Notes:
This 207-nucleotide RNA was probed chemically with 2A3 and DMS. For 2A3, 4,684 sequencing reads were counted. Source: RMDB library RNAMAK, as collected in RNAgym. The RNA was probed in 150 mM KOAc, 10 mM MgCl2 and 150 mM bicine (pH 8.5) at 24 C.
RNA sequence: GGGAACGACUCGAGUAGAGUCGAAAAAGGAAUGUUCGCAUUCCUCUAAAGAUAUGGAUCCAUCAAGUGUGUAGCGAGAGAUAUCUUCGGAAACGAAGAUAUGGAAUGCUACCACUUGAGUGGAUCCUAAGUCGCCUAAUCCCAAUUCGUUGGGAAAAUAGAUGCCUUAGUUCGCUAAGGCAUCUAUAAAAGAAACAACAACAACAAC
Reactivity to 2A3 in 0.01 (KOAc 150mM, MgCl2 10mM, bicine 150mM(pH8.5), 24C), signal-to-noise 4, nucleotides 027 to 156: a020g020g000a020a010u030g010u090u150c280g040c090a000u000u000c030c020u020c010u090a200a160a020g020a000u030a020u140g000g000a000u000c000c000a010u010c000a000a000g000u000g020u010g010u040a000g000c020g040a090g010a000g000a300u000a000u000c000u000u000c000g000g040a070a070a040c020g000a000a000g000a010u000a000u010g000g090a080a070u120g010c000u000a000c000c000a000c000u000u000g000a000g000u010g000g000a000u000c000c000u000a000a000g000u010c010g060c010c000u080a120a120u050c000c000c020a010a030u140u130c230g070u050u030g000g010g000a040a090a010
Reactivity to DMS in 0.01 (KOAc 150mM, MgCl2 10mM, bicine 150mM(pH8.5), 24C), signal-to-noise 2, nucleotides 027 to 156: a000g000g010a040a000u000g010u000u020c300g020c030a030u000u020c010c010u000c060u000a080a090a110g010a150u010a300u000g020g010a020u000c010c000a100u010c000a000a020g000u000g010u000g040u000a010g030c010g000a210g010a300g010a030u000a010u000c010u010u000c000g000g030a100a100a290c010g020a050a000g000a020u000a000u000g030g000a300a180u000g000c000u000a010c010c010a000c010u010u010g000a020g020u020g040g000a000u010c000c000u010a010a040g020u000c020g010c070c020u000a130a150u000c020c000c010a030a130u000u000c150g010u000u000g000g000g000a000a030a080